[RMDB]
RNA sequence: GGGAACGACUCGAGUAGAGUCGAAAACGAAGAGGAAAGAAGGACGCGAGACGCAAACCUGUGAGUGGAUCCUCGCCUUUAUUCACUGGGGACGACAACUCUGGGGAGAAAAGGGAGGAUCGGAUGGAGAGCUUCCACUUCGGUGGAAGCAAAAGAAACAACAACAACAAC
Reactivity to 2A3 in 0.01 (KOAc 150mM, MgCl2 10mM, bicine 150mM(pH8.5), 24C), signal-to-noise 7, nucleotides 027 to 129: c060g030a030a030g040a020g010g050a020a000a070g020a020a010g020g010a020c030g050c000g040a040g000a040c040g010c090a050a070a100c020c030u070g030u050g090a040g020u090g050g000a010u000c010c010u040c030g270c010c000u110u120u070a110u050u060c070a080c200u020g000g000g020g040a050c060g030a030c110a110a060c020u000c010u040g000g000g010g000a010g010a010a000a000a000g010g000g010a000g020g010a010u010c000g000g000a010u000g020g000a070g000a010
Reactivity to DMS in 0.01 (KOAc 150mM, MgCl2 10mM, bicine 150mM(pH8.5), 24C), signal-to-noise 6, nucleotides 027 to 129: c150g000a090a060g030a150g060g000a060a030a060g040a070a010g050g010a040c140g030c110g040a100g030a070c140g020c110a060a070a080c040c060u040g060u040g050a070g040u020g030g010a110u030c060c010u020c030g000c070c030u060u030u000a150u040u060c080a090c070u050g010g010g070g020a110c170g060a000c280a050a040c040u010c000u030g000g000g000g000a000g030a070a050a060a080g020g010g010a040g000g000a000u000c000g000g020a000u000g000g010a080g030a120